[RMDB]
RNA sequence: GGGAACGACUCGAGUAGAGUCGAAAAGAUACUCUGGCUUAUUAUGCUCACAGCGUGUUGUACAGAGUUUUUCCUUAUGACAUGGAUUCUGGUGUGUCAUCCUUUAGUGAACUACUUUUUGAUUGCGCAAUCUUGUUAAGUUCGCUUAACAAGAUUGAAAAGAAACAACAACAACAAC
Reactivity to 2A3 in 0.01 (KOAc 150mM, MgCl2 10mM, bicine 150mM(pH8.5), 24C), signal-to-noise 9, nucleotides 027 to 126: g010a000u050a020c000u000c000u010g010g000c020u110u060a040u170u090a020u200g010c010u020c050a120c050a040g000c010g010u030g020u060u050g010u070a110c010a000g000a000g000u000u000u000u020u000c000c000u020u050a100u050g030a020c010a030u040g070g030a120u180u060c050u160g120g020u080g010u000g010u050c010a040u060c010c020u120u120u090a090g040u070g090a080a050c020u060a070c020u130u090u050u080u140g150a150u060u150g030c070g000
Reactivity to DMS in 0.01 (KOAc 150mM, MgCl2 10mM, bicine 150mM(pH8.5), 24C), signal-to-noise 9, nucleotides 027 to 126: g000a050u000a020c000u000c000u000g000g000c040u010u000a070u010u010a030u000g010c000u010c280a160c290a160g010c020g030u000g010u000u000g010u010a100c020a020g000a020g010u000u000u000u000u000c000c000u000u010a060u010g010a050c060a050u000g010g010a140u000u000c100u000g010g010u000g010u000g010u000c030a050u000c110c060u000u010u000a060g010u000g010a060a090c090u010a050c080u000u000u010u000u000g000a110u000u000g010c150g000
An RNA of 177 nucleotides, treated with 2A3 and DMS and read out base by base. The reactions ran in a buffer of 150 mM KOAc, 10 mM MgCl2 and 150 mM bicine (pH 8.5), at 24 C. For 2A3, 22,650 sequencing reads were counted. The DMS profile rests on 34,168 reads. For DMS the reverse transcriptase was MarathonRT. The data come from the RNA Mapping Database (RMDB), library 15KREP.